[RMDB]
The data come from the RNA Mapping Database (RMDB), library OK1LIB. Structure probing data (DMS and 2A3) for a 177-nucleotide construct.
RNA sequence: GGGAACGACUCGAGUAGAGUCGAAAAAUGGUGGCGCCGUGCGGACCUAUAGAGCCAGGGGUGUCGGGUGGGGCCACGCCACCGGUGACAGCAUCGGCCGAGCAAGUGGUUCCUGCCUCGAUGCUGGUCUACGGAGCGCGUUCGCGCGCUUCGUAGGAAAAGAAACAACAACAACAAC
Reactivity to DMS in 0.01 (KOAc 150mM, MgCl2 10mM, bicine 150mM(pH8.5), 24C), signal-to-noise 9, nucleotides 027 to 126: a070u030g000g010u010g000g010c020g010c030c020g010u010g010c070g010g000a070c050c040u000a150u020a080g010a130g010c010c020a100g010g000g010g010u010g010u010c020g000g000g020u000g000g000g010g000c010c010a020c000g010c020c030a200c000c000g010g010u010g000a220c300a200g010c010a020u000c010g000g000c100c110g000a130g010c030a100a090g020u010g000g000u000u030c000c010u000g000c010c000u000c030g010a020u000g000c000u000g000g000
Reactivity to 2A3 in 0.01 (KOAc 150mM, MgCl2 10mM, bicine 150mM(pH8.5), 24C), signal-to-noise 7, nucleotides 027 to 126: a000u080g020g000u010g010g020c020g000c020c020g010u040g020c000g010g010a020c000c010u050a050u040a080g060a010g010c000c010a020g010g020g010g010u090g030u040c010g000g010g010u030g010g000g020g010c010c000a000c020g010c010c000a020c000c000g000g000u010g020a050c030a050g130c000a050u010c000g000g010c050c050g010a050g040c020a150a080g010u010g010g000u060u210c000c000u000g000c000c000u010c020g000a000u010g000c010u010g010g020

The 2A3 profile rests on 25,469 reads.